RNA sequence: GGGAACGACUCGAGUAGAGUCGAAAACAUCUUUCCUCCCUACACAGUGACUCCAGCUUGGGAGGGGCAGGGCUAGGCUGAGCCAGCACUCCCUGUGGUGUCUGCCCGCCACGUGCAGCUCUGGAGUAAAACCUGGAGAAGUUCGCUUCUCCAGGAAGAGUUUAUGUAAGUUCGCUUACAUAAACUCAAAAGAAACAACAACAACAAC
Reactivity to 2A3 in 0.01 (KOAc 150mM, MgCl2 10mM, bicine 150mM(pH8.5), 24C), signal-to-noise 5, nucleotides 027 to 156: c020a070u080c070u090u170u090c010c000u040c010c000c010u150a100c160a030c050a160g110u070g110a020c000u000c010c000a010g000c030u070u060g010g000g010a000g010g000g010g010c010a020g020g000g000c030u300a030g030g000c010u040g060a060g220c100c040a000g000c010a010c010u030c000c000c000u010g000u030g010g010u020g010u010c030u030g010c000c020c010g070c080c030a140c120g060u090g030c010a030g010c030u030c020u090g000g000a000g000u010a000a030a000a010c000c000u000g000g000a010g000a000a000g010u050u130c140g040c150u000u000c000u000c000c000a000g000g000a000a010
Reactivity to DMS in 0.01 (KOAc 150mM, MgCl2 10mM, bicine 150mM(pH8.5), 24C), signal-to-noise 2, nucleotides 027 to 156: c070a100u000c070u000u000u010c040c030u000c000c000c020u070a170c120a220c170a100g010u000g000a110c020u000c010c010a080g030c090u000u000g020g000g010a050g000g020g040g000c070a090g010g010g020c030u000a040g000g000c070u010g020a130g010c060c060a110g020c030a080c010u000c000c030c020u000g010u010g030g030u010g010u000c040u000g010c040c040c020g010c050c020a090c080g010u000g000c030a110g010c060u010c030u000g000g000a080g000u000a040a060a100a150c000c020u010g000g020a020g010a040a010g020u010u000c300g020c020u000u000c000u000c000c000a010g000g010a010a040